[RMDB]
RNA sequence: GGGAACGACUCGAGUAGAGUCGAAAAACGUCUAGCUCAACAAAGGGUUGUAGCCGUGAACCAAAUCGACUUUUUGCCCGACGCACGCCCUUAGCAACACCGCGCACGAUGCCACGACCGCGGGUAAACCCCCAAAGUAAUUCGUUACUUUGGGGGUAAAAGAAACAACAACAACAAC
Reactivity to 2A3 in 0.01 (KOAc 150mM, MgCl2 10mM, bicine 150mM(pH8.5), 24C), signal-to-noise 3, nucleotides 027 to 126: a010c030g010u010c010u010a020g020c000u040c020a050a210c040a090a290a100g130g030g010u070u050g190u100a010g000c030c020g030u040g070a050a020c020c020a040a030a090u090c040g040a060c020u110u060u020u110u100g050c000c020c040g000a010c070g010c010a020c020g030c010c020c000u030u090a040g060c030a000a060c030a030c060c000g010c020g000c020a040c050g040a060u120g090c050c020a050c000g030a020c020c020g020c020g000g000g020u020a060a020
Reactivity to DMS in 0.01 (KOAc 150mM, MgCl2 10mM, bicine 150mM(pH8.5), 24C), signal-to-noise 4, nucleotides 027 to 126: a080c170g010u020c020u000a080g000c020u010c030a060a090c150a120a180a130g010g000g030u000u000g010u010a030g020c030c020g020u000g010a100a130c070c030a050a080a090u000c070g020a040c060u010u010u000u000u010g000c020c010c030g000a060c090g020c060a070c090g000c020c010c020u000u000a080g010c110a060a050c080a080c020c020g010c020g020c100a100c100g000a100u000g010c070c030a060c050g010a090c140c030g020c040g000g000g020u000a040a090
Chemical mapping of a 177-nucleotide RNA with 2A3 and DMS. Values cover nucleotides 27 to 126. 2A3 adducts were read by reverse transcription with SuperScript II with manganese.